[RMDB]
RNA sequence: GGGAACGACUCGAGUAGAGUCGAAAAGAGCCGACAGAGAAGUCGGGAAGCGACGAGAGAGAAUAGAAUACAUUGGAAUUCGAGAUACUGCCACAAAAUGACAGACGUCGCCAUAUUCUCAGAGAAGACCUAUAGCUCCGUUCGCGGAGCUAUAGGUAAAAGAAACAACAACAACAAC
Reactivity to DMS in 0.01 (KOAc 150mM, MgCl2 10mM, bicine 150mM(pH8.5), 24C), signal-to-noise 3, nucleotides 027 to 126: g000a190g000c010c000g030a020c060a070g000a210g010a060a130g000u000c020g000g000g050a110a050g000c000g000a000c020g000a190g000a180g000a280g000a060a060u030a080g000a060a010u030a100c090a220u020u020g030g030a080a040u000u010c020g000a130g000a070u010a080c000u000g000c000c030a030c130a060a030a120a200u010g000a050c040a040g010a230c030g010u000c010g000c000c100a030u000a050u030u000c000u000c020a140g000a100g020a130a100g000
Reactivity to 2A3 in 0.01 (KOAc 150mM, MgCl2 10mM, bicine 150mM(pH8.5), 24C), signal-to-noise 3, nucleotides 027 to 126: g050a020g160c000c000g000a000c050a000g300a020g100a200a010g030u000c000g000g000g010a070a010g030c020g000a010c070g010a020g010a000g050a000g030a180a080u100a130g100a110a010u100a100c040a190u040u190g140g050a130a020u040u040c030g020a000g020a130u090a090c000u030g000c000c010a110c030a070a080a010a000u170g040a030c010a000g030a030c040g000u010c000g000c010c000a020u020a040u050u000c020u000c030a010g020a000g010a290a010g030